[RMDB]
RNA sequence: GGGAACGACUCGAGUAGAGUCGAAAACCUCACUACAUUUUACUGUUCCUAAAGAAUUUGUGACAGGUACAGUAAAACGUAUUGCAAGGUUUAUCAGUUCCUAUAGACAGGUAAAUAACAAUAUAUGAAAAGCAAAGACUGUUCGCAGUCUUUGCAACAUGCGAUGUCACUUCGGUGACAUCGCAUGAAAAGAAACAACAACAACAAC
Reactivity to 2A3 in 0.01 (KOAc 150mM, MgCl2 10mM, bicine 150mM(pH8.5), 24C), signal-to-noise 1, nucleotides 027 to 156: c000c000u060c000a010c010u000a010c000a070u000u000u000u000a000c000u000g020u050u070c050c000u090a050a210a020g160a300a300u220u100u200g290u090g120a170c110a070g000g000u000a000c000a000g000u000a010a010a010a010c010g000u000a010u000u010g010c100a120a000g060g000u050u000u000a200u110c070a000g000u000u000c000c000u010a060u040a050g160a000c040a000g040g130u160a060a150a120u220a210a050c110a080a090u160a010u000a000u160g050a070a070a040a040g000c000a000a000a000g000a000c000u020g010u090u110c170g000c090a000g000u020c000u000u000u000g000c000a000a000